The data come from the RNA Mapping Database (RMDB), library OK1LIB. Structure probing data (DMS and 2A3) for a 177-nucleotide construct. For DMS the reverse transcriptase was MarathonRT. For DMS, 4,075 sequencing reads were counted. The reactions ran in a buffer of 150 mM KOAc, 10 mM MgCl2 and 150 mM bicine (pH 8.5), at 24 C.
[RMDB]
RNA sequence: GGGAACGACUCGAGUAGAGUCGAAAAGAGACGUCAUAUGCGAGGUGCGACUUGGACACCCUUUGAGGAAUAAGGAUUAUAUCAUCCAACGUGAAGGGAACCACAUCCGUGCAUAAGGCAGCACCCACCAUUAUCCCAUCUUCGGAUGGGAUAAUGGAAAAGAAACAACAACAACAAC
Reactivity to DMS in 0.01 (KOAc 150mM, MgCl2 10mM, bicine 150mM(pH8.5), 24C), signal-to-noise 3, nucleotides 027 to 126: g000a050g010a100c090g000u000c000a030u000a000u000g000c040g000a100g020g010u000g020c120g010a170c300u000u050g000g020a120c230a210c000c000c030u000u000u000g000a120g010g020a160a080u030a070a150g000g000a040u000u000a110u000a110u060c180a050u010c000c000a100a150c060g030u020g000a010a020g000g010g010a190a110c050c030a050c120a050u020c030c020g000u020g000c020a080u000a010a080g000g000c000a090g000c100a070c000c000c010a230
Reactivity to 2A3 in 0.01 (KOAc 150mM, MgCl2 10mM, bicine 150mM(pH8.5), 24C), signal-to-noise 9, nucleotides 027 to 126: g090a000g020a020c070g000u010c010a030u010a010u050g020c020g060a070g040g040u040g030c150g080a110c080u070u070g020g010a020c010a110c060c020c000u010u000u030g200a190g060g060a180a110u210a200a080g030g010a040u070u050a170u120a090u300c080a010u010c010c000a030a050c070g090u200g110a000a000g000g000g000a020a030c010c000a010c010a030u060c020c030g120u160g010c010a010u030a040a030g010g000c000a010g030c030a060c000c000c000a000
Values cover nucleotides 27 to 126.